[RMDB]
RNA sequence: GGGAACGACUCGAGUAGAGUCGAAAAUGGGGCUUCUGUACAUCUCCUUCGGCAGUACACCUGAGCAACGGCCUUCCCCACUCAAGUGAUGUCAUUUAAAUAGGAAUGCAGCAAUAACAAAGUCAAGGUAACCACAUCAUUUCGAUGAUGUGGUUACAAAAGAAACAACAACAACAAC
Reactivity to 2A3 in 0.01 (KOAc 150mM, MgCl2 10mM, bicine 150mM(pH8.5), 24C), signal-to-noise 1, nucleotides 027 to 126: u070g000g020g020g050c010u090u010c020u070g060u030a000c000a080u000c010u020c080c000u000u050c040g010g000c020a010g040u060a030c010a050c000c000u030g020a030g000c040a060a090c060g030g000c000c000u050u050c020c010c020c010a030c000u040c020a060a070g050u050g100a030u040g030u020c030a030u030u140u180a300a300a120u090a000g050g020a050a020u060g000c030a000g030c070a050a040u130a080a030c070a100a100a020g010u050c010a030a020g070
Reactivity to DMS in 0.01 (KOAc 150mM, MgCl2 10mM, bicine 150mM(pH8.5), 24C), signal-to-noise 2, nucleotides 027 to 126: u000g000g000g020g010c070u000u010c060u020g020u000a100c110a130u020c080u000c040c020u000u030c160g020g000c050a090g000u000a110c130a060c040c000u000g020a070g000c050a110a120c110g000g040c040c060u000u000c020c000c000c090a170c080u010c090a050a030g030u000g010a090u000g010u000c050a140u020u000u020a030a080a140u000a140g000g000a040a050u000g000c030a000g000c110a040a070u010a040a120c120a100a140a080g000u000c130a120a070g000
Conditions: 150 mM KOAc, 10 mM MgCl2 and 150 mM bicine (pH 8.5), 24 C. The record gives the reactivity of an RNA of 177 nucleotides to 2A3 and DMS. For 2A3, 1,084 sequencing reads were counted. It was measured as part of the RMDB library OK2TRN. Reactivities are rounded to 0.1 and cut off at 0 and 3.